[RMDB]
RNA sequence: GGGAACGACUCGAGUAGAGUCGAAAACGGCCUAAAGGCCGAUCUUGAAGAAGUUCAGUUGACCAGGGACGGCGCUUCGGCGCUACGUUGUACGGAAGACAGAAGACCGACCGGCGAAUGCUUCCUCUCGAUCGCUACAUUUCGAUGUAGCGAUCGAAAAAGAAACAACAACAACAAC
Reactivity to 2A3 in 0.01 (KOAc 150mM, MgCl2 10mM, bicine 150mM(pH8.5), 24C), signal-to-noise 1, nucleotides 027 to 126: c000g000g000c000c010u200a200a220a080g050g000c120c000g050a100u020c000u130u080g040a080a080g010a000a000g000u140u200c110a010g000u010u090g120a110c020c000a020g060g070g000a000c020g040g080c000g000c020u080u060c010g060g000c000g020c000u130a090c000g000u010u150g070u070a040c050g000g010a000a110g000a010c010a040g110a050a000g000a050c000c070g000a070c000c100g000g000c070g000a170a080u130g000c000u000u020c010c000u000c000
Conditions: 150 mM KOAc, 10 mM MgCl2 and 150 mM bicine (pH 8.5), 24 C. Chemical mapping of a 177-nucleotide RNA with 2A3. Values cover nucleotides 27 to 126.